[RMDB]
RNA sequence: GGGAACGACUCGAGUAGAGUCGAAAACAUCCAGUGUUCGCACUGGAUGAGAGGAAUGUGGAUCGGCAAACUACAUACCAAAAGCUGAGCUGGAAAGAGCAACGAUUUCGUCGUUCGCGACGAAAAAACGAUCUUGCCAGUUCGCUGGCAAGAUCGUAAAAGAAACAACAACAACAAC
Reactivity to DMS in 0.01 (KOAc 150mM, MgCl2 10mM, bicine 150mM(pH8.5), 24C), signal-to-noise 1, nucleotides 027 to 126: c030a010u000c000c000a010g010u000g010u000u000c140g030c000a000c000u000g010g000a040u000g000a080g000a080g000g010a080a060u000g000u000g000g020a010u000c050g000g010c090a110a070a060c040u000a050c030a020u000a110c020c050a060a060a160a030g000c030u000g000a080g020c030u000g020g020a030a030a050g000a030g040c080a080a140c090g010a190u000u000u000c000g010u000c000g000u000u000c170g020c000g000a000c020g000a020a000a000a010a100
Reactivity to 2A3 in 0.01 (KOAc 150mM, MgCl2 10mM, bicine 150mM(pH8.5), 24C), signal-to-noise 1, nucleotides 027 to 126: c000a000u000c010c010a000g000u000g000u040u030c170g070c040a010c020u010g020g010a000u000g000a020g000a010g000g030a070a030u060g000u060g130g000a080u090c080g050g030c120a020a030a100c000u050a010c020a050u070a080c000c040a030a050a020a000g080c060u060g060a000g020c010u030g030g080a010a100a020g070a060g050c030a010a050c010g030a060u030u020u030c000g000u000c000g000u060u060c300g000c020g000a000c000g000a000a030a000a000a020

Conditions: 150 mM KOAc, 10 mM MgCl2 and 150 mM bicine (pH 8.5), 24 C. This 177-nucleotide RNA was probed chemically with DMS and 2A3. It was measured as part of the RMDB library M2PK50. The 2A3 profile rests on 1,071 reads.